[RMDB]
RNA sequence: GGGAACGACUCGAGUAGAGUCGAAAAGGGUAGAUCUUCGGAUCUACCCAAAAGGAGCAACCAACGAAGGAAGAGCUAGCAUAAGCGUGCAGGCUAGCACUAAAAGGUUCCGCUUCGGCGGAACCAACCUUAGUGUGACGUUCGCGUCACACUAAGGAAAAGAAACAACAACAACAAC
Reactivity to DMS in 0.01 (KOAc 150mM, MgCl2 10mM, bicine 150mM(pH8.5), 24C), signal-to-noise 2, nucleotides 027 to 126: g000g030g010u010a010g000a030u000c000u000u000c180g030g000a010u000c000u000a000c000c020c000a000a010a070a050g020g000a080g020c040a050a100c000c050a050a080c120g020a090a070g000g000a100a050g020a090g010c000u000a000g010c050a080u010a070a160g040c070g020u000g010c030a180g020g010c020u000a040g000c000a070c090u000a020a020a060a180g020g000u000u000c000c000g000c000u000u010c130g050g020c000g000g000a010a000c000c010a000a020
Reactivity to 2A3 in 0.01 (KOAc 150mM, MgCl2 10mM, bicine 150mM(pH8.5), 24C), signal-to-noise 2, nucleotides 027 to 126: g000g000g000u010a000g000a000u000c010u050u070c230g060g010a000u000c000u010a000c020c000c000a020a000a000a000g040g000a040g000c050a010a110c020c000a010a110c070g100a110a020g110g060a070a050g010a030g070c010u030a010g060c020a060u060a300a040g150c060g100u080g020c100a000g010g090c010u010a010g000c000a000c020u010a040a040a030a040g010g020u000u000c010c000g020c030u020u010c190g090g000c000g010g000a000a000c000c000a000a000
The record gives the reactivity of an RNA of 177 nucleotides to DMS and 2A3. For DMS the reverse transcriptase was MarathonRT. The data come from the RNA Mapping Database (RMDB), library M2PK50. 2A3 adducts were read by reverse transcription with SuperScript II with manganese. The DMS profile rests on 1,614 reads.